This 177-nucleotide RNA was probed chemically with DMS and 2A3. The 2A3 profile rests on 1,709 reads. Values are in units of 0.01, from 0 to 300, in steps of 10.

RNA sequence: GGGAACGACUCGAGUAGAGUCGAAAACGUGUGUACGUGGAGGAGAGUCCCUACCUUUCUGGGGGAUCGAGCUCUGCCCACAGAGGCGGACUCACGAGGUAGGAUCGAUAGAUGUGACGCCGCAUGGCGCUCCAUGGCACUUCGGUGCCAUGGAGCGAAAAGAAACAACAACAACAAC
Reactivity to DMS in 0.01 (KOAc 150mM, MgCl2 10mM, bicine 150mM(pH8.5), 24C), signal-to-noise 3, nucleotides 027 to 126: c090g020u010g020u000g020u000a040c120g030u010g030g000a150g030g000a160g010a110g010u010c080c000c020u000a060c030c010u000u000u000c180u000g020g000g000g010g020a150u030c140g010a040g040c170u000c020u000g020c040c020c020a150c150a110g000a090g010g000c020g000g000a050c010u000c000a130c150g010a040g010g010u000a030g000g010a050u000c060g010a090u010a110g000a080u010g010u000g000a110c090g010c060c020g000c150a100u000g000g000
Reactivity to 2A3 in 0.01 (KOAc 150mM, MgCl2 10mM, bicine 150mM(pH8.5), 24C), signal-to-noise 2, nucleotides 027 to 126: c050g020u090g020u020g070u090a040c030g010u050g070g030a080g080g030a060g010a010g140u060c010c040c010u050a070c010c020u100u210u160c170u170g000g050g000g080g010a070u080c060g000a010g050c070u020c000u010g020c000c030c010a210c060a060g110a140g010g020c000g020g010a040c000u000c010a070c070g010a030g000g020u030a020g020g000a020u100c010g020a030u100a090g120a040u070g070u040g020a020c020g020c000c010g000c060a060u190g080g000